The data come from the RNA Mapping Database (RMDB), library M2PK90. An RNA of 177 nucleotides, treated with DMS and read out base by base. The DMS profile rests on 1,125 reads.
RNA sequence: GGGAACGACUCGAGUAGAGUCGAAAACACAUGCCAUCAUAUCGGUUAAGAACUCUUAACUCUGAUGGCUUUCGAGUUAUGUGGUGCUUUGAAGCUCUCCCUUCAAUUCAACGUACCGUUCCGUCAAAUAAACUGUUCCGUUCGCGGAACAGUUUAUAAAAGAAACAACAACAACAAC
Reactivity to DMS in 0.01 (KOAc 150mM, MgCl2 10mM, bicine 150mM(pH8.5), 24C), signal-to-noise 2, nucleotides 027 to 126: c090a100c130a080u000g010c000c000a010u000c000a060u010a180u000c280g000g010u000u000a000a000g000a300a100c300u010c030u000u000a020a000c000u000c090u000g000a040u000g000g030c010u000u000u000c090g010a020g000u000u000a050u000g000u010g010g000u000g010c000u010u000u010g010a060a020g010c120u000c060u000c050c030c010u000u030c040a060a060u000u000c050a020a060c010g000u010a020c030c010g020u000u000c000c020g030u010c040a060a120
The RNA was probed in 150 mM KOAc, 10 mM MgCl2 and 150 mM bicine (pH 8.5) at 24 C.
High DMS reactivity at an A or C suggests that its Watson-Crick edge is free.